Structure probing data (2A3) for a 177-nucleotide construct. Values cover nucleotides 27 to 126. Source: RMDB library OK1LIB, as collected in RNAgym. Values are in units of 0.01, from 0 to 300, in steps of 10.
[RMDB]
RNA sequence: GGGAACGACUCGAGUAGAGUCGAAAACAUCCGCGUCGCUCGGGUCAUUGAGCAGGACAUGGCCGUGGACAGCGCCGGCAAGAUCACCUACCGCAUCAAGCUCGAAGUGUCGUUCAAGAUGAGGCCGCCCGUACAGGCCAUUCGUGGCCUGUACGGGAAAAGAAACAACAACAACAAC
Reactivity to 2A3 in 0.01 (KOAc 150mM, MgCl2 10mM, bicine 150mM(pH8.5), 24C), signal-to-noise 3, nucleotides 027 to 126: c050a060u040c000c000g020c000g020u080c050g020c000u000c030g100g030g040u040c020a120u030u090g110a130g040c070a030g050g000a050c100a150u130g010g000c010c030g100u080g030g010a080c020a120g000c040g000c040c010g030g000c120a070a020g020a070u100c000a080c030c030u030a040c030c000g020c020a040u030c060a140a040g010c000u020c020g110a170a140g040u050g050u160c000g010u030u040c060a040a000g090a160u120g000a060g030g010c010c060g000